[RMDB]
Source: RMDB libraries RFM100 and RFMREP, as collected in RNAgym. This 177-nucleotide RNA was probed chemically with DMS and 2A3. The RNA was probed in 150 mM KOAc, 10 mM MgCl2 and 150 mM bicine (pH 8.5) at 24 C. For DMS the reverse transcriptase was MarathonRT.

RNA sequence: GGGAACGACUCGAGUAGAGUCGAAAAUAUUUGCAGGUUUUAGGUCUAAGUGGUGAAUAUCGAUCUCUGAAUAUAUUGAUAACCUUCACAAAUUUGCUGAUUAUUUUUGUAGCGCUCUUUCAUGAGAUCACACAGGUAUUUUCGAAUACCUGUGUGAAAAAGAAACAACAACAACAAC
Reactivity to DMS in 0.01 (KOAc 150mM, MgCl2 10mM, bicine 150mM(pH8.5), 24C), signal-to-noise 4, nucleotides 027 to 126: u010a030u010u020u000g000c060a050g000g000u000u000u010u010a030g020g010u010c050u020a090a090g030u010g000g010u030g010a060a080u000a080u000c090g010a030u000c020u010c080u010g000a110a090u020a080u010a070u000u000g010a060u010a030a090c100c040u000u000c060a050c100a030a030a040u020u020u010g010c040u010g000a060u020u020a020u010u010u000u020u020g010u020a090g000c070g020c010u000c010u010u030u020c060a040u020g010a050g010a120
Reactivity to 2A3 in 0.01 (KOAc 150mM, MgCl2 10mM, bicine 150mM(pH8.5), 24C), signal-to-noise 6, nucleotides 027 to 126: u080a030u020u050u030g010c010a020g050g000u000u010u100u180a040g040g000u020c060u100a130a150g080u070g100g040u080g100a100a060u060a020u110c060g010a030u010c070u000c000u080g040a130a010u160a030u030a040u100u060g020a040u040a080a070c010c000u060u080c060a050c030a070a050a030u070u060u050g000c030u030g040a060u060u080a050u050u130u020u040u120g070u090a020g010c030g000c040u000c000u040u190u030c070a100u240g010a010g000a070